Overview: Chemical mapping of a 177-nucleotide RNA with DMS and 2A3. The 2A3 profile rests on 1,278 reads. For DMS, 805 sequencing reads were counted. Conditions: 150 mM KOAc, 10 mM MgCl2 and 150 mM bicine (pH 8.5), 24 C. It was measured as part of the RMDB library OK2TRN.
[RMDB]
RNA sequence: GGGAACGACUCGAGUAGAGUCGAAAACCUAGGAUCUGAUCAUGUAGUAUACAUGGCUAGUCUGAUCCGUACUCUAGUCAUGUCGUCUCUAGGAUCUACACAUGUAGGAUCACAUGCUAGGCUCAUGGGCUGUUCGAUUUUUCGAAAUCGAACAGCCAAAAGAAACAACAACAACAAC
Reactivity to DMS in 0.01 (KOAc 150mM, MgCl2 10mM, bicine 150mM(pH8.5), 24C), signal-to-noise 1, nucleotides 027 to 126: c010c030u010a090g030g000a000u000c040u020g010a080u000c010a030u000g030u000a100g030u020a100u010a030c000a000u000g010g000c040u010a070g000u010c030u020g000a100u020c120c130g020u010a040c020u000c000u000a010g000u000c000a080u000g000u000c110g000u000c040u010c140u000a100g030g000a060u000c000u000a060c070a080c110a010u010g000u000a260g020g010a020u000c010a100c150a070u000g020c040u000a030g000g040c080u010c090a090u010g020
Reactivity to 2A3 in 0.01 (KOAc 150mM, MgCl2 10mM, bicine 150mM(pH8.5), 24C), signal-to-noise 1, nucleotides 027 to 126: c020c000u030a050g040g000a010u030c010u040g000a090u270c020a010u040g020u060a120g050u000a060u000a190c000a000u000g000g000c030u010a020g090u070c170u110g090a120u030c060c000g000u090a090c050u020c000u020a000g020u030c020a010u010g020u020c080g070u020c030u000c060u130a070g010g110a030u060c040u050a010c010a000c000a030u130g020u040a040g070g000a010u010c020a000c000a010u080g060c000u030a000g030g000c010u030c040a040u120g110